[RMDB]
RNA sequence: GGGAACGACUCGAGUAGAGUCGAAAAGAAGGUCGAGUGCACGACCAGAGAGUGCGGUGAGCGACCGACAAAGAGUUCGAAUCGGAACGAACGACCGCAGACGAUCGACUGAAGAUCGAAGUGAGAACAUUAUCGCAGUCUUCGGACUGCGAUAAUGAAAAGAAACAACAACAACAAC
Reactivity to DMS in 0.01 (KOAc 150mM, MgCl2 10mM, bicine 150mM(pH8.5), 24C), signal-to-noise 6, nucleotides 027 to 126: g010a130a130g000g020u010c000g000a100g020u020g010c090a080c010g000a050c000c060a130g030a180g010a130g010u000g000c010g000g030u020g000a090g010c020g000a080c030c010g010a110c130a030a090a050g020a190g010u010u020c040g010a170a180u020c110g010g030a130a070c010g010a060a070c070g010a100c010c030g020c030a030g000a210c050g000a030u000c020g020a130c200u020g010a120a150g010a040u000c020g000a120a120g000u020g020a150g020a150a100
Reactivity to 2A3 in 0.01 (KOAc 150mM, MgCl2 10mM, bicine 150mM(pH8.5), 24C), signal-to-noise 6, nucleotides 027 to 126: g080a050a030g010g000u010c010g010a040g120u150g090c120a040c070g010a010c000c020a000g040a000g010a000g060u250g050c030g030g030u030g030a080g080c040g010a040c000c000g020a010c020a010a180a020g150a030g080u090u100c030g060a060a110u120c090g040g060a090a100c010g010a030a010c020g030a000c000c000g000c020a010g020a100c010g000a010u000c000g050a080c160u240g070a080a000g000a060u020c000g020a080a010g100u100g060a090g010a050a030

Chemical mapping of a 177-nucleotide RNA with DMS and 2A3. The data come from the RNA Mapping Database (RMDB), library OK1LIB. 2A3 adducts were read by reverse transcription with SuperScript II with manganese. The 2A3 profile rests on 5,770 reads. The RNA was probed in 150 mM KOAc, 10 mM MgCl2 and 150 mM bicine (pH 8.5) at 24 C. High DMS reactivity at an A or C suggests that its Watson-Crick edge is free.